[RMDB]
RNA sequence: GGGAACGACUCGAGUAGAGUCGAAAAGAUAUGGAAUAUCCAACAGCAACAGCUACUGCAUCGGAAACGAUGUGUAGACAUGCUGGGAUAUUCCUAAGUCAAACCGCCAAUGUUCGCAUUGGCGGAACCUUAGGACCAGCUUCGGCUGGUCCUAAGGAAAAGAAACAACAACAACAAC
Reactivity to 2A3 in 0.01 (KOAc 150mM, MgCl2 10mM, bicine 150mM(pH8.5), 24C), signal-to-noise 1, nucleotides 027 to 126: g030a000u000a010u030g010g000a040a000u020a000u000c010c160a260a300c080a300g000c050a060a210c020a270g000c000u020a020c010u100g050c000a030u000c000g000g000a020a000a000c000g120a020u020g000u030g030u000a010g040a000c050a230u300g000c000u000g000g000g000a000u000a000u000u010c010c010u000a000a000g000u000c060a060a050a090c030c010g000c040c020a000a070u080g050u120u150c300g040c200a000u030u030g000g080c050g000g000a010a010
An RNA of 177 nucleotides, treated with 2A3 and read out base by base.
Values are in units of 0.01, from 0 to 300, in steps of 10.
The data come from the RNA Mapping Database (RMDB), library TTRDES.
2A3 adducts were read by reverse transcription with SuperScript II with manganese.
The RNA was probed in 150 mM KOAc, 10 mM MgCl2 and 150 mM bicine (pH 8.5) at 24 C.
For 2A3, 1,425 sequencing reads were counted.